[RMDB]
RNA sequence: GGGAACGACUCGAGUAGAGUCGAAAACUGGACUGUGCUACUGUAAUACGCUCAACAUCGGUUGAGCGUAUUACAGUGGCACAGAUCGUAGAGCGAUGUCCUUUCUAUCGCAUGUUAAGUGUUAACUUAACGUGCGAUAGGAAGGACUCCAGCUAAGCGAUCCUACUUAGUUCGCUAAGUAGGAUCGAAAAGAAACAACAACAACAAC
Reactivity to 2A3 in 0.01 (KOAc 150mM, MgCl2 10mM, bicine 150mM(pH8.5), 24C), signal-to-noise 1, nucleotides 027 to 156: c000u000g000g020a000c010u020g000u010g000c010u010a010c000u000g010u010a000a010u000a000c010g030c020u010c020a020a010c040a200u300c170g110g000u010u010g000a000g010c000g000u010a010u000u020a000c010a000g010u000g000g000c000a000c000a000g000a000u000c000g000u010a030g020a020g140c000g000a000u000g000u000c000c000u010u000u020c000u000a010u020c000g010c010a000u010g000u000u000a000a000g020u010g060u150u160a070a030c000u000u000a000a000c000g010u000g000c000g000a000u000a000g000g000a010a010g010g000a000c000u000c000c000a000g010c020u060a060a000g090
Reactivity to DMS in 0.01 (KOAc 150mM, MgCl2 10mM, bicine 150mM(pH8.5), 24C), signal-to-noise 1, nucleotides 027 to 156: c000u000g010g010a030c000u000g000u010g020c010u010a010c000u010g000u000a010a000u000a000c010g040c000u010c000a000a010c000a300u010c230g060g010u000u000g010a050g020c000g010u000a000u000u000a000c000a000g020u000g010g020c000a010c010a000g000a000u010c000g000u000a070g010a250g020c000g020a040u000g010u030c000c020u000u010u000c000u000a010u030c000g010c000a000u000g020u000u000a020a010g030u000g030u000u020a130a080c000u010u010a000a010c010g030u000g000c010g020a010u000a010g000g010a010a010g030g000a000c000u000c000c010a040g010c000u000a060a130g020